[RMDB]
RNA sequence: GGGAACGACUCGAGUAGAGUCGAAAAUGAGACAAACACGCUUCACAAUGUGCGGCAAAGAAACAUUGUUUAUGCAAAGGCACUGCGCAAUGUGUGCUCAAACAUUGCUUAUUCAAACACGCUUCACAAAAGAAUCAGUGGUUCGCCACUGAUUCAACGACUUGCAGAUCUUCGGAUCUGCAAGUCGAAAAGAAACAACAACAACAAC
Reactivity to 2A3 in 0.01 (KOAc 150mM, MgCl2 10mM, bicine 150mM(pH8.5), 24C), signal-to-noise 1, nucleotides 027 to 156: u160g040a020g060a060c030a000a120a000c070a060c110g020c010u030u070c030a000c000a010a000u000g000u000g000c000g010g070c080a010a160a110g120a000a060a000c000a000u010u000g150u010u050u030a090u150g040c030a140a070a100g120g000c030a020c120u120g030c060g060c060a030a000u010g000u010g030u040g090c060u000c080a050a120a050c030a030u010u000g000c000u070u050a210u160u090c100a110a090a010c080a010c100g100c040u130u100c000a040c000a080a060a040a040g000a000a000u000c000a000g010u000g100g000u050u020c160g000c090c000a000c000u020g000a000u000u020c000a000a000
This 207-nucleotide RNA was probed chemically with 2A3. Conditions: 150 mM KOAc, 10 mM MgCl2 and 150 mM bicine (pH 8.5), 24 C. Reactivities are given for positions 27 through 156. The 2A3 profile rests on 472 reads. As a SHAPE reagent, 2A3 marks flexible, mostly unpaired nucleotides at the ribose 2'-OH.